[RMDB]
This 177-nucleotide RNA was probed chemically with DMS and 2A3.
The RNA was probed in 150 mM KOAc, 10 mM MgCl2 and 150 mM bicine (pH 8.5) at 24 C.
The 2A3 profile rests on 14,210 reads.
DMS (dimethyl sulfate) methylates the pairing face of unpaired adenines and cytosines.
RNA sequence: GGGAACGACUCGAGUAGAGUCGAAAAGAUAUGGACGUCGCGUGGGAGGUGUUCGGAAACGAAUACACCGAAGAACACGAUGACGUCCUAAGUCAAACAAUGCAGACUCUUCGGAGUCUGCAUUGAAGAACAUUAUUUCGUUCGCGAAAUAAUGUUCAAAAGAAACAACAACAACAAC
Reactivity to DMS in 0.01 (KOAc 150mM, MgCl2 10mM, bicine 150mM(pH8.5), 24C), signal-to-noise 3, nucleotides 027 to 126: g010a040u000a300u000g010g010a020c000g030u000c000g000c010g010u000g000g000g010a100g000g020u000g000u000u000c000g000g000a070a090a130c010g000a030a060u010a090c020a020c000c000g000a090a130g000a130a170c000a000c000g010a070u010g020a010c000g000u000c000c000u000a010a070g010u000c040a140a170a220c010a000a010u000g000c000a010g000a010c000u010c000u000u010c150g020g000a010g000u000c000u000g000c000a000u000u000g000a060a090
Reactivity to 2A3 in 0.01 (KOAc 150mM, MgCl2 10mM, bicine 150mM(pH8.5), 24C), signal-to-noise 4, nucleotides 027 to 126: g020a010u060a040u180g000g010a000c000g010u000c010g000c000g010u000g010g030g000a040g000g020u010g010u020u020c020g010g010a060a050a020c020g000a030a030u270a160c020a000c000c010g050a130a030g030a040a010c010a000c010g230a300u130g000a000c000g000u010c000c010u000a000a000g000u000c010a030a040a040c000a000a010u010g000c000a010g000a010c010u000c020u080u180c300g040g000a000g000u000c000u000g000c010a010u000u000g000a000a010